This 207-nucleotide RNA was probed chemically with DMS and 2A3. 2A3 is a SHAPE reagent: it acylates the 2'-hydroxyl of flexible nucleotides of all four kinds.
RNA sequence: GGGAACGACUCGAGUAGAGUCGAAAAGUGAACGAUCUCGGUUGUUUCUCUGAAGGCAUGAUCACCCCGUCCGAUGCGGAAGUUCGUGCUUCCGUCGAACGCGAAACUCGGACGGCGGCCAUGAGUCAAUAUGUUUAAGGCUUCGGCCUUAAACAAAACUCUGUAUAGGUUUCGACCUAUACAGAGUAAAAGAAACAACAACAACAAC
Reactivity to DMS in 0.01 (KOAc 150mM, MgCl2 10mM, bicine 150mM(pH8.5), 24C), signal-to-noise 2, nucleotides 027 to 156: g030u000g000a050a110c040g000a090u000c020u000c010g010g020u000u020g000u010u000u000c010u000c050u000g020a120a060g020g010c010a020u000g010a060u010c160a080c000c020c020c010g040u010c000c040g010a060u020g030c020g020g000a110a040g000u000u000c120g040u010g000c110u000u000c100c090g060u010c010g010a030a100c060g000c070g010a260a110a050c020u000c000g010g040a080c000g030g030c070g000g040c060c010a050u000g000a120g030u020c040a090a130u000a130u000g000u000u000u010a000a010g030g030c000u000u000c300g020g020c010c000u000u000a010a000a010c000a030a030a100
Reactivity to 2A3 in 0.01 (KOAc 150mM, MgCl2 10mM, bicine 150mM(pH8.5), 24C), signal-to-noise 4, nucleotides 027 to 156: g150u130g060a130a040c040g030a100u050c030u050c120g020g000u000u000g010u000u030u000c040u020c060u060g090a120a050g100g000c010a010u010g010a020u090c030a020c010c000c000c000g000u000c000c000g000a010u060g010c020g010g020a010a000g010u140u300c170g130u300g070c000u000u010c000c000g010u020c030g040a140a040c070g000c020g160a100a040a030c030u000c000g000g020a000c000g000g010c020g010g010c010c000a020u020g000a010g030u040c020a040a090u060a080u290g010u000u000u000a000a000g000g000c010u010u060c270g050g000c000c000u000u000a000a000a000c000a000a010a000
Values are in units of 0.01, from 0 to 300, in steps of 10.
For 2A3 the reverse transcriptase was SuperScript II with manganese.